Structure probing data (2A3 and DMS) for a 177-nucleotide construct. 2A3 adducts were read by reverse transcription with SuperScript II with manganese.
[RMDB]
RNA sequence: GGGAACGACUCGAGUAGAGUCGAAAAUAUGCCUCUCUAUCUUGAUUACUUCACGGGCUUCACCAGGGAGGAACUCGAGGCGGCGGGGAUAGAUCCCGACGACAUCUAUCCGAAUCUCCUCUCCGGACACGUAGUGUCGUUUCGACGACACUACGUGAAAAGAAACAACAACAACAAC
Reactivity to 2A3 in 0.01 (KOAc 150mM, MgCl2 10mM, bicine 150mM(pH8.5), 24C), signal-to-noise 3, nucleotides 027 to 126: u220a070u120g030c010c020u030c010u000c000u070a070u150c030u090u100g120a110u160u170a100c040u050u080c070a030c120g040g040g040c000u130u150c080a050c030c020a010g010g000g010a000g010g010a000a020c040u020c030g010a030g000g060c050g000g010c060g000g050g000g020a050u120a200g130a120u100c030c040c010g010a030c040g000a010c010a080u050c020u070a070u050c030c010g020a040a040u030c030u000c110c000u040c020u030c010c020g040g000a020
Reactivity to DMS in 0.01 (KOAc 150mM, MgCl2 10mM, bicine 150mM(pH8.5), 24C), signal-to-noise 3, nucleotides 027 to 126: u010a070u000g000c010c000u000c030u010c050u010a050u020c040u000u000g010a070u000u000a120c080u000u000c070a120c100g020g020g020c110u020u010c100a110c050c020a080g010g020g010a030g000g000a070a090c230u000c020g010a110g010g000c010g020g000c130g020g020g020g000a120u000a030g010a080u010c010c000c020g000a060c070g010a070c120a040u000c070u000a090u000c050c010g000a050a120u000c090u000c010c030u000c060u000c020c040g000g020a300